This 177-nucleotide RNA was probed chemically with DMS. For DMS, 660 sequencing reads were counted.
[RMDB]
RNA sequence: GGGAACGACUCGAGUAGAGUCGAAAAUGCAAACUCCUUGGUCACACACACAUACGGCGCGGAAGGCGUGUUUGCUGACGUUUCCAUUCCCUUGUUUCAAUCAUUGGUUAAUCCCUUGAUUCCUUUGCGAACGCCAGUAGUUCGCUACUGGCGUUCGAAAAGAAACAACAACAACAAC
Reactivity to DMS in 0.01 (KOAc 150mM, MgCl2 10mM, bicine 150mM(pH8.5), 24C), signal-to-noise 1, nucleotides 027 to 126: u000g000c090a080a060a000c110u020c030c050u000u000g000g030u000c040a070c070a080c060a050c080a100c070a030u000a090c150g000g000c030g020c090g000g000a070a140g010g010c200g000u000g000u000u010u000g000c060u010g000a150c070g080u000u000u000c020c000a240u000u000c000c000c000u000u010g010u000u000u050c160a090a050u000c020a070u020u000g030g070u000u000a050a140u000c140c010c000u000u000g010a090u000u000c160c030u000u010u000g070

DMS adducts were read by reverse transcription with MarathonRT.